RNA sequence: GGGAACGACUCGAGUAGAGUCGAAAAGAAAGAAAGAAAGACACGAGGGCAGCGAUGACCCGCCGGGCGAUCUGUGGCCGCCAUGUGCCCGGCGUCGAGCAGUGGCGCGCCCGGGCCGUCAGAUCAAAAAACGCCCACUACUUCGGUAGUGGGCGAACACUGAUAUUAGGUUCGCCUAAUAUCAGUGAAAAGAAACAACAACAACAAC
Reactivity to 2A3 in 0.01 (KOAc 150mM, MgCl2 10mM, bicine 150mM(pH8.5), 24C), signal-to-noise 1, nucleotides 027 to 156: g040a000a000a010g060a040a080a020g080a070a050a020g040a030c010a010c140g050a080g040g000g000c080a090g020c010g030a010u070g040a110c010c000c020g000c020c000g030g000g020c010g010a060u000c020u040g110u140g170g020c010c010g010c030c000a080u200g040u080g140c040c030c040g040g000c030g030u070c000g000a010g000c010a020g010u010g010g020c020g010c030g000c000c010c010g000g030g010c030c010g000u030c040a000g010a150u080c070a040a040a040a000a000a080c050g000c000c000c000a020c000u020a000c010u010u050c080g090g010u010a010g010u000g000g000g000c010g000a000a000